Record summary: This 177-nucleotide RNA was probed chemically with DMS. The DMS profile rests on 1,002 reads. The data come from the RNA Mapping Database (RMDB), library TTRDEL.
RNA sequence: GGGAACGACUCGAGUAGAGUCGAAAAGAUAUGGAUUGAUAGGACAUGCACCUCGGAAACGAGUGUGCAACAGCCUAAUAAUCCUAAGUCAAAGUCUGACCGUACAGUUCGCUGUACGGUCAGACAAGUUUAGGCAGUGGUUCGCCACUGCCUAAACAAAAGAAACAACAACAACAAC
Reactivity to DMS in 0.01 (KOAc 150mM, MgCl2 10mM, bicine 150mM(pH8.5), 24C), signal-to-noise 1, nucleotides 027 to 126: g010a040u010a280u000g000g000a000u000u000g000a090u010a020g000g000a060c150a100u000g000c000a010c010c000u000c010g020g000a020a040a140c000g020a000g010u010g070u000g020c000a010a010c190a140g000c010c010u010a000a080u000a010a020u000c010c020u000a050a080g010u010c030a150a150a100g000u000c000u000g010a030c000c000g030u000a000c000a000g000u000u020c220g030c020u000g000u010a030c010g020g000u020c000a010g010a000c000a000a040
Record summary:
For DMS the reverse transcriptase was MarathonRT.